[RMDB]
RNA sequence: GGGAACGACUCGAGUAGAGUCGAAAAGAUAUGGAACACUCUAGGGAUGCAUCGAUCUCGGAAACGAGGGAGCAUACCUAGAGGUGUUCCUAAGUCAAACGACGUCAAGGUUCGCCUUGACGUCGAACUAUUCUUGUUUGUUCGCAAACAAGAAUAGAAAAGAAACAACAACAACAAC
Reactivity to 2A3 in 0.01 (KOAc 150mM, MgCl2 10mM, bicine 150mM(pH8.5), 24C), signal-to-noise 5, nucleotides 027 to 126: g010a000u100a030u220g010g000a000a000c000a000c010u010c000u010a000g020g010g020a000u000g010c020a260u300c060g100a160u030c010u000c010g020g040a100a090a040c010g000a010g000g010g010a020g000c000a000u010a040c000c010u000a010g000a000g000g000u000g000u000u000c000c000u000a070a020g080u000c030a050a090a140c020g010a000c000g020u010c020a000a000g080g010u070u170c300g160c050c000u000u000g000a000c000g000u000c000g000a000a000
Reactivity to DMS in 0.01 (KOAc 150mM, MgCl2 10mM, bicine 150mM(pH8.5), 24C), signal-to-noise 9, nucleotides 027 to 126: g010a050u000a300u010g000g000a010a000c000a030c000u000c000u000a010g000g010g000a020u000g010c000a300u000c170g010a050u010c000u000c000g000g000a120a090a180c000g000a020g000g010g000a030g020c000a000u000a020c000c000u000a000g010a010g000g010u000g010u000u000c000c000u000a010a090g010u000c040a070a130a260c010g000a020c000g010u000c000a010a010g010g010u000u010c260g010c000c000u000u000g010a010c000g010u000c000g000a020a090

The record gives the reactivity of an RNA of 177 nucleotides to 2A3 and DMS. For 2A3 the reverse transcriptase was SuperScript II with manganese. High DMS reactivity at an A or C suggests that its Watson-Crick edge is free. The 2A3 profile rests on 20,288 reads. For DMS the reverse transcriptase was MarathonRT. Conditions: 150 mM KOAc, 10 mM MgCl2 and 150 mM bicine (pH 8.5), 24 C. Source: RMDB library TTRDEL, as collected in RNAgym.